[RMDB]
Chemical mapping of a 177-nucleotide RNA with 2A3 and DMS. 2A3 adducts were read by reverse transcription with SuperScript II with manganese. Source: RMDB library OK2TRN, as collected in RNAgym. DMS adducts were read by reverse transcription with MarathonRT.

RNA sequence: GGGAACGACUCGAGUAGAGUCGAAAAAAAGAACAGAAAACCAACAGAACGUCGGGUGAAACUUUGUCAUCUUUAUGUCUAACCCACCUUGAGACAUUAGCUGGGUGACUUUACAUAGUGUCCACAAACACUAGGUACCGUUCGCGGUACCUAGUGUAAAAGAAACAACAACAACAAC
Reactivity to 2A3 in 0.01 (KOAc 150mM, MgCl2 10mM, bicine 150mM(pH8.5), 24C), signal-to-noise 1, nucleotides 027 to 126: a000a000a000g110a080a010c040a030g010a030a140a020a010c010c010a010a090c010a040g160a110a040c080g010u030c020g010g030g040u050g030a150a040a040c030u050u080u090g060u040c010a070u000c040u030u100u100a020u060g020u000c020u100a110a160c040c030c000a020c000c030u070u080g100a050g000a010c020a040u180u160a040g040c070u060g010g000g000u030g000a020c000u090u090u040a070c050a050u140a050g050u020g100u070c010c020a060c030a070a190
Reactivity to DMS in 0.01 (KOAc 150mM, MgCl2 10mM, bicine 150mM(pH8.5), 24C), signal-to-noise 2, nucleotides 027 to 126: a080a010a040g040a060a040c120a090g010a100a070a060a070c060c060a090a100c040a100g010a080a150c130g010u010c070g010g000g000u020g010a050a070a130c140u000u000u000g000u000c060a020u000c040u000u010u020a020u030g010u000c040u000a070a070c030c020c030a020c140c050u010u000g000a110g000a050c080a060u010u000a000g000c170u000g020g020g000u010g000a060c030u000u030u020a070c120a060u000a060g030u000g010u030c020c120a070c230a100a100